[RMDB]
RNA sequence: GGGAACGACUCGAGUAGAGUCGAAAAGCGCUGGCUAUCUAUGGCCCGACUCGGUGUCAAUAGUAAAGUAGCUGCCUUUGUGAUGGUCAGCUUAUUUUUAAUAACUUUUUCCAUGUUAUAAAGGCAGGGAUAAUAUUUAUUUCGAUAAAUAUUAUCCAAAAGAAACAACAACAACAAC
Reactivity to DMS in 0.01 (KOAc 150mM, MgCl2 10mM, bicine 150mM(pH8.5), 24C), signal-to-noise 4, nucleotides 027 to 126: g000c140g020c030u000g000g000c000u000a020u030c040u010a040u010g000g010c000c000c000g000a180c160u040c050g020g020u050g020u010c010a060a070u020a090g010u020a070a050a100g020u020a080g010c000u010g000c000c010u000u000u000g000u020g000a040u000g000g000u010c060a010g000c060u000u020a010u010u000u030u020u030a050a050u010a050a070c030u000u020u010u000u010c010c010a060u020g010u030u020a020u000a030a020a010g000g010c010a010g000
Reactivity to 2A3 in 0.01 (KOAc 150mM, MgCl2 10mM, bicine 150mM(pH8.5), 24C), signal-to-noise 5, nucleotides 027 to 126: g040c020g010c010u010g010g000c000u010a010u010c010u000a020u030g010g000c010c000c010g080a110c050u060c140g020g010u130g020u050c020a060a100u020a050g090u090a020a130a050g040u030a020g040c000u000g000c000c000u010u010u040g050u030g010a020u020g000g010u020c010a000g000c000u010u020a040u020u060u010u010u050a050a060u070a020a020c010u050u060u020u060u030c000c010a030u070g040u120u110a070u030a050a020a000g000g000c000a000g000